Source: RMDB library OK2TRN, as collected in RNAgym. Chemical mapping of a 177-nucleotide RNA with 2A3 and DMS.
RNA sequence: GGGAACGACUCGAGUAGAGUCGAAAAAUGCCGGCAUCGCGGCCGCGUAGCGCAUCGAUAUGCUAAUUAUACGAUGCGCAUCGAUGCGCGCUAAUUAUAGCUAGCUAAUCGAUAUAUCGCGCGCGGCUCGGCUGAUGUUAUUCGUAACAUCAGCCGAAAAAGAAACAACAACAACAAC
Reactivity to 2A3 in 0.01 (KOAc 150mM, MgCl2 10mM, bicine 150mM(pH8.5), 24C), signal-to-noise 1, nucleotides 027 to 126: a000u060g060c040c050g060g090c050a090u150c050g090c050g130g050c000c030g020c000g030u000a100g000c010g000c000a000u000c000g030a030u000a000u080g060c060u110a060a030u100u030a050u020a080c130g060a100u120g000c000g000c000a000u000c020g050a070u210g050c000g000c010g000c040u020a010a010u140u070a060u040a050g000c030u020a010g000c000u020a150a000u010c020g000a000u030a030u020a000u130c020g020c000g030c010g000c000g030g000c060
Reactivity to DMS in 0.01 (KOAc 150mM, MgCl2 10mM, bicine 150mM(pH8.5), 24C), signal-to-noise 2, nucleotides 027 to 126: a090u000g010c030c000g030g020c190a070u000c060g010c220g010g010c070c000g020c010g000u000a080g000c000g050c300a010u000c000g010a020u010a130u010g000c130u000a070a040u000u000a030u000a000c070g010a130u000g000c020g000c010a030u000c070g000a150u010g010c110g010c080g000c010u000a100a170u000u040a020u000a010g030c120u000a080g000c000u000a180a080u010c010g020a020u000a140u050a070u000c000g000c020g030c000g000c000g000g000c020
For DMS, 1,193 sequencing reads were counted.